Structure probing data (DMS and 2A3) for a 177-nucleotide construct. For 2A3 the reverse transcriptase was SuperScript II with manganese.
RNA sequence: GGGAACGACUCGAGUAGAGUCGAAAAGGCGGAUGCCACGAUUUUGCGGUUGAACUGUUCGUUUUCUUCUAAUUGAAACGCAUUGACUUCGGCGGGCAACAGCAUUUUACGCUCAAAAACCCACGCCCUUACAGGUAUGUUUCGACAUACCUGUAAGAAAAGAAACAACAACAACAAC
Reactivity to DMS in 0.01 (KOAc 150mM, MgCl2 10mM, bicine 150mM(pH8.5), 24C), signal-to-noise 9, nucleotides 027 to 126: g000g010c030g010g010a060u010g010c010c040a110c150g000a110u010u000u010u010g020c030g010g020u010u010g000a050a090c090u010g010u000u000c020g000u000u000u020u010c040u020u010c180u020a070a120u040u010g000a040a030a040c050g000c130a060u000u020g010a130c110u000u000c030g010g000c020g000g010g020c020a040a060c150a080g000c010a040u000u010u010u020a100c110g010c050u010c120a040a040a060a110a090c020c000c010a110c190g000c110c080
Reactivity to 2A3 in 0.01 (KOAc 150mM, MgCl2 10mM, bicine 150mM(pH8.5), 24C), signal-to-noise 9, nucleotides 027 to 126: g020g000c000g020g020a030u050g020c020c030a100c080g040a060u080u080u080u090g020c020g020g010u020u030g020a050a040c020u020g050u060u050c020g020u020u080u070u040c050u110u030c060u090a160a220u100u160g030a030a010a000c010g010c030a030u010u080g050a090c070u020u010c020g010g000c010g030g110g000c010a030a020c010a030g000c000a010u010u020u060u150a050c020g010c010u060c080a060a070a030a050a050c010c000c010a030c040g060c020c020
Source: RMDB libraries RFM100 and RFMREP, as collected in RNAgym. Reactivities are given for positions 27 through 126.